[RMDB]
RNA sequence: GGGAACGACUCGAGUAGAGUCGAAAACAGCCGGGAGCUUUGGCAAGACUCACGUCUCUAACAACCGAGCUCCCCAAGUGAGCAAUUCCUGUCCCUUUUAUGGGCUCAGGACUCUAAGGGGGUCCGUGUGAGAGGACCGUGAUGGAUUGAUCAAGCACUAAUAAAUCCCAUUCGUGGGAUUUAUUAGAAAAGAAACAACAACAACAAC
Reactivity to DMS in 0.01 (KOAc 150mM, MgCl2 10mM, bicine 150mM(pH8.5), 24C), signal-to-noise 2, nucleotides 027 to 156: c040a180g000c060c060g020g010g020a100g020c030u010u000u010g000g000c030a090a110g000a130c050u000c060a030c050g040u000c020u000c030u100a080a140c070a080a060c040c010g000a060g000c010u000c000c010c000c040a000a130g040u010g010a040g000c080a090a150u000u000c010c020u010g030u000c020c010c010u000u020u000u000a160u000g020g000g040c050u000c010a040g010g020a050c020u000c000u000a250a160g010g010g020g000g000u000c010c020g000u000g010u000g010a180g030a300g010g000a040c060c020g020u000g020a090u000g030g010a200u000u010g010a190u010c070a080a100g000c030a300
Reactivity to 2A3 in 0.01 (KOAc 150mM, MgCl2 10mM, bicine 150mM(pH8.5), 24C), signal-to-noise 4, nucleotides 027 to 156: c010a030g120c050c040g060g090g040a090g000c030u180u170u150g060g000c010a010a000g010a010c000u020c030a010c010g090u040c040u000c020u050a120a050c050a060a070c060c020g020a050g010c010u160c010c000c000c000a090a020g140u060g070a000g040c070a110a270u100u020c000c000u000g010u020c010c010c000u060u240u070u250a140u300g020g000g000c060u030c020a000g000g000a010c000u030c000u040a100a120g020g010g000g010g000u040c030c000g050u050g000u020g030a060g000a020g040g020a060c090c050g000u010g000a050u120g000g030a020u010u050g010a050u090c000a000a020g010c010a000